[RMDB]
RNA sequence: GGGAACGACUCGAGUAGAGUCGAAAAGACGUGGAGGUGUCGCGCCCUCCUUUGCGCGUAAGUACGUCGAAAUUCGGUGCUGUGGAUCGCACCGUCUGAUCCAUUAGAUAUCCGCUCUGUGCCGCGGUUGGGCAUUUACACUUACCCGAAAGGGGAACAUUAUACUAUGAUUCGUCAUAGUAUAAUGAAAAGAAACAACAACAACAAC
Reactivity to DMS in 0.01 (KOAc 150mM, MgCl2 10mM, bicine 150mM(pH8.5), 24C), signal-to-noise 4, nucleotides 027 to 156: g020a050c030g010u010g000g010a070g010g020u000g010u000c100g040c100g030c120c010c030u000c030c020u010u000u000g040c040g040c050g020u000a070a120g010u010a060c050g020u000c010g030a080a100a130u000u000c010g030g020u010g000c000u000g040u000g020g010a060u010c050g000c020a300c080c080g000u000c030u010g010a050u010c020c020a100u000u010a100g010a120u000a120u010c040c020g020c060u000c050u000g000u010g010c020c020g000c030g000g020u000u000g010g010g050c070a080u000u000u000a100c090a030c050u010u000a160c000c000c000g000a080a090a180g000g020g000g000a060a170
Reactivity to 2A3 in 0.01 (KOAc 150mM, MgCl2 10mM, bicine 150mM(pH8.5), 24C), signal-to-noise 6, nucleotides 027 to 156: g030a010c020g020u050g000g020a020g020g030u030g010u060c010g010c000g000c030c000c010u010c020c000u050u070u090g040c050g000c030g050u070a070a050g040u030a030c020g020u030c000g050a050a070a060u130u070c020g030g000u000g010c020u030g030u110g080g040a070u080c030g000c020a070c070c010g000u000c020u040g020a020u010c010c020a040u080u170a040g060a090u090a070u110c020c010g000c020u020c030u040g040u050g020c000c010g020c010g010g000u040u070g040g000g000c030a020u060u060u080a060c070a010c030u060u110a060c010c010c010g030a050a030a040g000g000g000g000a010a000
Notes:
Chemical mapping of a 207-nucleotide RNA with DMS and 2A3. For 2A3, 6,319 sequencing reads were counted. For DMS the reverse transcriptase was MarathonRT. The data come from the RNA Mapping Database (RMDB), library OK3TST. The RNA was probed in 150 mM KOAc, 10 mM MgCl2 and 150 mM bicine (pH 8.5) at 24 C. 2A3 adducts were read by reverse transcription with SuperScript II with manganese.